[RMDB]
RNA sequence: GGGAACGACUCGAGUAGAGUCGAAAAAGCAGGCUCAUUACGAUGAGCCUGCACAGAUUAAGUGGAGGUGUGAUCUCUUCACUUUUUAUGUUUAAAGUGAGAUUCAACUCCUCCAACUUAACCCUAACAACAUAGCGCUCUUCGGAGCGCUAUGUUGAAAAGAAACAACAACAACAAC
Reactivity to 2A3 in 0.01 (KOAc 150mM, MgCl2 10mM, bicine 150mM(pH8.5), 24C), signal-to-noise 2, nucleotides 027 to 126: a000g000c000a000g030g020c000u000c000a030u000u100a230c230g050a060u020g030a000g020c050c010u050g000c000a010c000a020g010a010u020u020a000a000g000u000g000g000a000g000g010u000g000u000g070a150u000c030u010c020u180u260c090a020c040u080u040u000u000u020a300u110g240u000u100u080a040a000a000g020u000g010a000g020a020u000u030c150a110a070c090u050c000c010u010c000c000a000a000c000u000u000a040a030c050c000c000u040a110a070